This 207-nucleotide RNA was probed chemically with 2A3. The data come from the RNA Mapping Database (RMDB), library M2RFPK. 2A3 adducts were read by reverse transcription with SuperScript II with manganese. The reactions ran in a buffer of 150 mM KOAc, 10 mM MgCl2 and 150 mM bicine (pH 8.5), at 24 C.
RNA sequence: GGGAACGACUCGAGUAGAGUCGAAAAACGGUGCGGAAGUUCGCUCUUCCGUGAAACGCGAAAAUCGGACGGUGGCUGCAAGUCGCAUCGCAAAACCGCGGCAAGUGGAGUUAGCGAGAGGAGGCUGAAACCAUCCAACACUUCGGUGUUGGAUGAACGGGGAACGAAGUUUCGACUUCGUUCCCCGAAAAGAAACAACAACAACAAC
Reactivity to 2A3 in 0.01 (KOAc 150mM, MgCl2 10mM, bicine 150mM(pH8.5), 24C), signal-to-noise 1, nucleotides 027 to 156: a000c030g040g000u060g010c000g010g010a000a090g020u060u170c110g090c180u000c010u030u000c020c000g000u000g030a020a090a000c140g020c020g080a060a080a000a030u100c020g070g010a010c000g100g000u060g010g030c030u070g010c010a100a000g080u000c010g040c010a040u080c020g000c000a090a090a000a000c040c050g090c040g020g000c180a180a070g050u040g030g060a130g020u050u060a000g020c050g030a010g000a020g130g000a010g010g000c010u030g020a120a030a000c070c030a000u000c000c000a000a000c000a000c000u020u030c070g110g000u000g000u000u000g000g000a000u000g000a030a000